[RMDB]
RNA sequence: GGGAACGACUCGAGUAGAGUCGAAAAUGAAAGGGGCAAGAGAGAUCUUACAGAUAGACAGAGAUUGUUUAGCUUUCUCCCCCUCACUGAGGGGUGCCUGAAGCUUUGAGUAAGGUUCUACAUAAGAGUGCUAAUGUAUGUUCGCAUACAUUAGCACAAAAGAAACAACAACAACAAC
Reactivity to DMS in 0.01 (KOAc 150mM, MgCl2 10mM, bicine 150mM(pH8.5), 24C), signal-to-noise 6, nucleotides 027 to 126: u020g010a060a090a090g000g010g010g010c170a080a060g000a090g010a090g000a060u000c040u000u010a070c070a100g000a140u000a070g010a040c050a030g000a130g000a110u000u010g020u000u000u000a040g000c010u000u000u000c080u010c030c000c000c000c000u000c010a160c250u010g010a030g000g010g000g010u010g000c140c060u010g010a040a050g000c030u000u000u000g000a140g010u010a030a030g000g000u000u000c020u000a060c110a100u010a060a100g000a170
Reactivity to 2A3 in 0.01 (KOAc 150mM, MgCl2 10mM, bicine 150mM(pH8.5), 24C), signal-to-noise 3, nucleotides 027 to 126: u160g040a060a050a020g010g000g030g000c020a130a020g060a010g010a000g000a130u010c000u020u050a020c010a030g140a210u120a030g050a050c020a010g080a020g040a150u040u090g040u040u100u070a020g010c000u000u070u050c010u010c000c020c010c030c000u010c010a280c060u110g000a000g020g000g000g010u060g020c010c030u030g000a000a000g010c000u130u100u130g040a050g010u030a020a000g040g030u050u030c030u050a120c030a110u160a080a040g080a000

An RNA of 177 nucleotides, treated with DMS and 2A3 and read out base by base. For DMS, 6,922 sequencing reads were counted.